[RMDB]
RNA sequence: GGGAACGACUCGAGUAGAGUCGAAAAGGGCAUACUCGUAGACCUUGCCUGACUGUGCUCAUGUCCAGGCAGGGGGGACAGUGUAUGCAAGAAUAAUUUGGAGUUCCUGCCAGCUCUAACCAGCUUCGUGAUAAAUAUCCUUCGGGAUAUUUAUCACAAAAGAAACAACAACAACAAC
Reactivity to 2A3 in 0.01 (KOAc 150mM, MgCl2 10mM, bicine 150mM(pH8.5), 24C), signal-to-noise 3, nucleotides 027 to 126: g050g040g000c000a020u010a010c000u010c030g040u060a030g100a110c000c000u000u010g020c000c010u000g010a010c010u030g050u170g190c060u100c230a060u200g010u030c100c010a000g000g010c020a010g000g000g000g020g010g010a020c050a100g020u000g010u030a010u010g010c020a010a010g050a010a070u200a050a080u130u090u160g100g030a070g020u030u020c010c000u010g030c020c020a020g000c010u010c020u040a030a040c010c010a020g020c030u120u160c140
Reactivity to DMS in 0.01 (KOAc 150mM, MgCl2 10mM, bicine 150mM(pH8.5), 24C), signal-to-noise 4, nucleotides 027 to 126: g010g010g000c010a000u000a010c010u010c050g020u000a130g010a110c010c000u000u000g010c020c000u000g000a050c000u010g000u020g000c220u020c100a070u010g010u000c110c100a020g000g000c010a010g000g010g010g000g020g000a100c090a110g020u010g010u000a000u010g000c010a090a060g000a110a060u010a080a090u000u000u010g020g030a170g000u000u000c020c010u010g000c080c080a080g000c010u000c020u000a060a090c170c160a090g000c060u000u000c270
Overview:
An RNA of 177 nucleotides, treated with 2A3 and DMS and read out base by base. For 2A3, 3,762 sequencing reads were counted. The RNA was probed in 150 mM KOAc, 10 mM MgCl2 and 150 mM bicine (pH 8.5) at 24 C. For DMS the reverse transcriptase was MarathonRT. The data come from the RNA Mapping Database (RMDB), library RFMREP.